This 207-nucleotide RNA was probed chemically with DMS and 2A3. For 2A3 the reverse transcriptase was SuperScript II with manganese. In probing experiments dimethyl sulfate is read out at A N1 and C N3, which are open when not base-paired. The data come from the RNA Mapping Database (RMDB), library OK3TST. For DMS the reverse transcriptase was MarathonRT.
[RMDB]
RNA sequence: GGGAACGACUCGAGUAGAGUCGAAAAGCAACCGCCUACACGUCAGUAGACGAAGAUGACGACUACUAUGAUCGAGGCCAAUCCUACUCGCCGGCCGUGAACCCUGCUAACGGGAUGCCGAUGGUUGCUGGCACCUAUGUGGACGUCAACGGCAAUACAUUAGACAAAGGUUCGCCUUUGUCUAAUGAAAAGAAACAACAACAACAAC
Reactivity to DMS in 0.01 (KOAc 150mM, MgCl2 10mM, bicine 150mM(pH8.5), 24C), signal-to-noise 3, nucleotides 027 to 156: g000c010a070a100c050c000g020c030c000u000a050c010a130c180g010u010c140a180g040u000a030g020a020c030g000a130a180g000a090u000g010a300c050g010a080c000u000a080c050u000a080u000g010a130u010c030g000a070g030g030c000c030a100a190u000c030c000u000a070c110u000c090g040c040c040g020g010c020c030g010u000g000a070a160c030c000c030u010g020c050u000a100a100c150g000g000g020a030u000g020c030c020g020a140u010g020g020u000u000g050c040u000g020g020c000a030c010c000u010a100u010g040u040g010g010a090c020g020u000c010a090a070c020g000g000c010a060a060u030a190
Reactivity to 2A3 in 0.01 (KOAc 150mM, MgCl2 10mM, bicine 150mM(pH8.5), 24C), signal-to-noise 8, nucleotides 027 to 156: g010c000a010a010c000c020g050c040c010u090a060c110a040c080g230u150c090a120g050u080a050g060a050c060g060a110a060g090a120u160g050a070c020g010a010c010u170a090c010u020a200u120g120a160u100c030g020a020g030g060c070c010a020a070u030c000c010u040a150c070u060c090g160c070c060g070g000c000c010g030u020g040a070a070c020c000c010u030g020c040u060a080a040c080g000g030g070a140u040g010c010c010g060a070u100g020g000u030u020g000c010u010g010g010c000a010c010c000u070a100u130g060u050g020g000a050c050g040u040c060a060a040c020g040g000c000a010a010u140a060